[RMDB]
RNA sequence: GGGAACGACUCGAGUAGAGUCGAAAAGAUAUGGAAGUCUUAUCAGGAGGUACCAUGCAAGAGGGUCAUCGGAAACGAUGACCUACCCACCUUGCAUGGUACUACCCACCCUGUGACUUCCUAAGUCCAUCAUCUGUUACUUCGGUAACAGAUGAUGAAAAGAAACAACAACAACAAC
Reactivity to DMS in 0.01 (KOAc 150mM, MgCl2 10mM, bicine 150mM(pH8.5), 24C), signal-to-noise 3, nucleotides 027 to 126: g000a080u000a300u000g000g000a000a020g010u000c010u000u010a180u020c010a020g030g020a200g010g010u000a010c010c000a000u000g000c000a000a010g010a140g040g000g000u000c000a030u000c000g020g000a160a070a250c020g030a020u000g000a000c000c010u000a010c030c050c090a300c090c000u000u000g000c020a000u000g000g000u000a000c020u000a030c080c090c160a300c070c000c000u000g010u010g020a000c020u000u020c000c000u000a010a070g000u010c060
Reactivity to 2A3 in 0.01 (KOAc 150mM, MgCl2 10mM, bicine 150mM(pH8.5), 24C), signal-to-noise 2, nucleotides 027 to 126: g050a030u160a070u250g010g010a030a000g000u000c070u210u290a300u300c020a010g020g010a040g110g000u010a010c000c000a000u000g000c020a000a000g010a040g080g010g000u020c010a000u000c000g050g000a120a090a050c020g010a020u000g010a000c000c000u000a010c000c010c010a070c010c020u000u000g030c000a000u010g000g000u000a000c000u010a010c010c010c010a070c000c000c020u080g030u040g020a000c000u000u010c000c000u040a120a030g050u070c060
The data come from the RNA Mapping Database (RMDB), library TTRINS. This 177-nucleotide RNA was probed chemically with DMS and 2A3. The DMS profile rests on 2,320 reads.